[RMDB]
RNA sequence: GGGAACGACUCGAGUAGAGUCGAAAAUGAAUGCCGGGGGAUACGCCUGGGUUAUCGACAUGGGGGACAGCUACAAGAACUACUGUCACCAGGCCGGCGGGGUUUAUCUCGAUGGCUCUAAACUGCGUGUGUAAUGAACGUUCGCGUUCAUUACACAAAAAGAAACAACAACAACAAC
Reactivity to DMS in 0.01 (KOAc 150mM, MgCl2 10mM, bicine 150mM(pH8.5), 24C), signal-to-noise 2, nucleotides 027 to 126: u010g000a120a090u030g010c080c030g000g000g000g000g000a030u000a000c140g050c010c040u000g010g030g070u030u010a080u050c040g000a030c050a010u000g010g010g000g010g000a010c050a000g020c300u070a110c120a110a130g040a150a130c130u020a240c010u000g050u010c000a030c000c000a070g010g000c030c010g030g040c030g040g010g000g000u000u000u000a040u010c030u010c020g000a150u020g040g020c000u000c050u000a080a070a120c050u030g010c110g000
Reactivity to 2A3 in 0.01 (KOAc 150mM, MgCl2 10mM, bicine 150mM(pH8.5), 24C), signal-to-noise 4, nucleotides 027 to 126: u150g110a040a070u100g020c000c000g020g000g000g000g030a020u040a010c040g010c010c020u070g050g080g030u090u140a160u150c030g030a020c010a060u090g010g000g020g140g000a000c000a000g030c050u110a040c080a200a210g050a160a050c050u170a050c000u100g000u000c000a020c010c000a000g010g000c010c000g020g020c000g020g010g020g000u050u010u050a050u010c020u000c000g200a250u060g000g000c000u010c010u020a190a250a080c090u170g040c050g160